RNA sequence: GGGAACGACUCGAGUAGAGUCGAAAAUAAAGCGUACGAAGAUGGACGUACGCAACAAGUGCGUACAGGAAUCGCACAUCCAGCGCUCUAAGAAGAGCGCAAAAAGAAAUCCUAGAAAGUCUGUUUCGACAGACUAAAAGAAACAACAACAACAAC
Reactivity to DMS in 0.01 (KOAc 150mM, MgCl2 10mM, bicine 150mM(pH8.5), 24C), signal-to-noise 6, nucleotides 027 to 135: u000a050a130a100g000c000g000u000a040c010g010a100a100g020a130u020g000g010a150c010g010u000a010c010g000c000a030a040c200a060a050g000u000g000c000g010u010a100c100a060g000g000a060a070u020c010g010c010a000c010a070u010c020c010a110g000c000g010c000u000c000u010a170a120g030a140a060g020a000g000c010g010c010a000a010a020a080a030g000a040a030a070u000c010c000u000a090g010a100a080a030g000u000c010u000g000u000u000u030c110g000a040c000a000g010a020c010u000a040
Reactivity to 2A3 in 0.01 (KOAc 150mM, MgCl2 10mM, bicine 150mM(pH8.5), 24C), signal-to-noise 7, nucleotides 027 to 135: u080a000a050a010g000c000g000u000a000c000g030a060a060g100a120u180g050g040a020c010g000u000a010c010g010c010a000a010c040a020a020g000u000g000c010g000u020a060c030a040g010g030a010a030u130c000g000c000a000c000a000u010c010c010a010g000c000g000c000u000c000u050a120a120g140a120a020g000a090g000c000g000c000a020a010a000a000a000g040a000a010a000u000c000c000u010a010g070a020a030a000g000u000c000u000g000u000u040u040c090g040a000c000a000g000a000c000u010a040